[RMDB]
Conditions: 150 mM KOAc, 10 mM MgCl2 and 150 mM bicine (pH 8.5), 24 C. An RNA of 207 nucleotides, treated with 2A3 and DMS and read out base by base. DMS adducts were read by reverse transcription with MarathonRT. It was measured as part of the RMDB library M2RFPK. For 2A3 the reverse transcriptase was SuperScript II with manganese.
RNA sequence: GGGAACGACUCGAGUAGAGUCGAAAAAUACUUCUCAGGAUGGCGCGUUGCAGUCCAAGAAGAUCCAGGGACUGUACAGAAUUUUCCUAUACCUCGAGUCGGGUUUGGAAUCUAAGGUUGACUCGCUAAAACUUUACGUGGUUCGCCACGUAAAGAACAAAUUGGACUUGUUCGCAAGUCCAAUUUGAAAAGAAACAACAACAACAAC
Reactivity to 2A3 in 0.01 (KOAc 150mM, MgCl2 10mM, bicine 150mM(pH8.5), 24C), signal-to-noise 2, nucleotides 027 to 156: a000u080a060c030u090u070c070u000c040a030g040g040a080u060g060g000c080g040c080g140u050u050g020c030a000g000u000c000c010a020a050g090a100a010g060a130u070c060c080a030g030g000g000a000c000u010g040u020a030c020a090g230a220a120u060u040u020u020c000c010u030a080u110a190c020c020u010c090g000a010g000u030c010g000g020g000u070u070u030g020g020a040a020u000c050u080a120a140g040g030u100u080g060a040c000u010c060g040c010u070a070a050a000a050c010u030u000u000a010c000g000u000g020g020u020u060c120g040c100c000a000c000g010u000a000a000a000g000a000a000
Reactivity to DMS in 0.01 (KOAc 150mM, MgCl2 10mM, bicine 150mM(pH8.5), 24C), signal-to-noise 1, nucleotides 027 to 156: a070u000a040c020u010u010c000u000c020a090g040g010a070u000g010g030c070g060c170g050u030u010g010c000a080g000u000c000c010a080a100g010a050a160g010a030u020c060c010a150g020g030g060a080c030u010g040u000a160c020a130g000a120a090u000u000u000u010c030c010u000a110u020a050c050c030u000c060g020a020g010u000c040g020g050g010u000u000u000g000g000a070a110u020c070u000a080a100g010g020u000u020g030a060c030u000c010g000c070u000a030a080a270a120c000u000u000u000a000c000g040u000g020g030u010u000c300g040c000c000a030c010g010u000a010a000a020g000a070a140